RNA sequence: GGGAACGACUCGAGUAGAGUCGAAAAAAUACAAAGCGGCAUCUCUUGCCACACAAGAACUCUCACCGCAGUUACAGGUCAUGAUUAACUUGGAAAUUGAGCAGAAGCGUCAGGCAGAGAAGCUUGAGCACGUGGAAGAACGGAUCGAAAGCAUCCGCAUACGGUCAAGUUUCGACUUGACCGUAUGAAAAGAAACAACAACAACAAC
Reactivity to 2A3 in 0.01 (KOAc 150mM, MgCl2 10mM, bicine 150mM(pH8.5), 24C), signal-to-noise 4, nucleotides 027 to 156: a010a000u250a030c060a010a070a030g030c020g040g000c020a060u030c050u010c020u140u070g030c040c020a030c010a000c000a010a050g040a100a030c010u010c000u040c100a040c030c020g000c050a030g020u070u060a030c020a040g000g060u070c050a060u060g070a070u100u150a050a060c010u030u030g020g020a050a050a090u090u060g000a030g000c040a030g030a170a000g030c040g100u090c030a020g030g000c010a000g000a000g020a130a010g000c010u030u030g010a010g000c030a010c060g020u020g010g020a030a030g000a070a010c000g010g000a000u010c020g120a070a120a050g020c050a000u000c000c000g000
Reactivity to DMS in 0.01 (KOAc 150mM, MgCl2 10mM, bicine 150mM(pH8.5), 24C), signal-to-noise 2, nucleotides 027 to 156: a110a060u000a130c040a070a110a160g010c040g050g010c030a100u010c030u010c070u000u000g000c020c020a050c040a220c080a100a090g020a130a100c030u000c010u000c020a060c040c010g000c020a150g020u000u000a100c040a040g000g020u000c070a070u000g020a150u000u000a020a030c020u010u000g010g010a050a050a180u000u000g000a220g030c020a050g010a080a070g040c040g010u000c040a090g010g010c040a080g020a100g000a020a090g010c030u000u000g000a010g030c000a050c040g010u000g060g020a100a040g000a060a110c000g010g000a030u000c010g030a090a100a170g020c070a080u000c010c020g000

Structure probing data (2A3 and DMS) for a 207-nucleotide construct. The RNA was probed in 150 mM KOAc, 10 mM MgCl2 and 150 mM bicine (pH 8.5) at 24 C. DMS (dimethyl sulfate) methylates the pairing face of unpaired adenines and cytosines. It was measured as part of the RMDB library OK3TST. The 2A3 profile rests on 4,095 reads. For 2A3 the reverse transcriptase was SuperScript II with manganese.